RNA sequence: GGGAACGACUCGAGUAGAGUCGAAAAGAUCAAUUACGCGAAUAAAGAUGUCGACAAGAUGGACAUGACCGUCAACAACAUGAUAAGCGAGACAAUAACCAACGAGCUAGAGAUUAUGCUGAAAAACUUUGCGGAGCAAAUUAACGGUGAUCAACAGCAUCUGACGCUGAUUCGUCAGCGUCAGAUGAAAAGAAACAACAACAACAAC
Reactivity to 2A3 in 0.01 (KOAc 150mM, MgCl2 10mM, bicine 150mM(pH8.5), 24C), signal-to-noise 1, nucleotides 027 to 156: g020a050u050c060a020a090u200u080a020c050g000c020g060a060a010u220a120a100a010g090a060u010g010u040c010g000a060c100a210a000g000a100u090g060g000a020c010a010u140g060a030c050c000g120u060c010a040a010c010a020a000c000a080u030g020a080u090a130a040g000c050g010a040g010a020c070a110a070u070a070a020c020c060a020a130c080g030a000g000c030u020a030g010a000g000a090u100u000a090u110g080c010u060g030a000a000a000a000a180c000u080u140u110g060c030g000g020a020g080c020a000a060a080u060u020a070a040c030g000g020u010g020a040u090c020a020a020c020a100g140